RNA sequence: GGGAACGACUCGAGUAGAGUCGAAAAGAGUCGAUAUACACACAAACAUUCUAUCUCGCCCAGAUCUCCAGCAUGUAUAGACUCUGCUGAGACAGCGGAUAUCAGUUGCCUAGGCGCUGGCCAGUGCCGGAUCUGUACUGUUCGCAGUACAGAUCCGAAAAGAAACAACAACAACAAC
Reactivity to DMS in 0.01 (KOAc 150mM, MgCl2 10mM, bicine 150mM(pH8.5), 24C), signal-to-noise 2, nucleotides 027 to 126: g020a060g010u000c000g000a130u020a110u010a100c050a050c160a080c070a040a070a080c090a030u000u010c100u000a080u000c030u000c070g000c020c010c040a140g000a120u000c040u000c070c060a090g000c010a070u000g000u000a210u000a120g000a050c020u000c040u000g000c030u000g000a040g000a060c100a120g030c040g000g010a060u000a070u000c050a090g030u000u010g030c050c060u000a100g010g020c030g020c030u020g000g010c090c020a050g010u000g000c110
Reactivity to 2A3 in 0.01 (KOAc 150mM, MgCl2 10mM, bicine 150mM(pH8.5), 24C), signal-to-noise 1, nucleotides 027 to 126: g040a030g000u010c020g050a040u050a020u050a230c080a010c020a000c030a090a210a000c000a090u110u000c030u060a120u040c070u060c100g050c030c010c000a040g030a170u040c020u050c030c020a050g000c020a070u060g090u150a110u060a150g050a030c030u000c020u080g000c010u020g040a040g010a040c030a020g050c050g010g040a000u040a040u120c050a030g070u180u120g130c000c030u000a050g030g010c040g150c040u080g020g090c000c040a050g010u020g060c030
The record gives the reactivity of an RNA of 177 nucleotides to DMS and 2A3. For DMS the reverse transcriptase was MarathonRT. For 2A3, 1,009 sequencing reads were counted. Values cover nucleotides 27 to 126. The reactions ran in a buffer of 150 mM KOAc, 10 mM MgCl2 and 150 mM bicine (pH 8.5), at 24 C. For DMS, 1,089 sequencing reads were counted.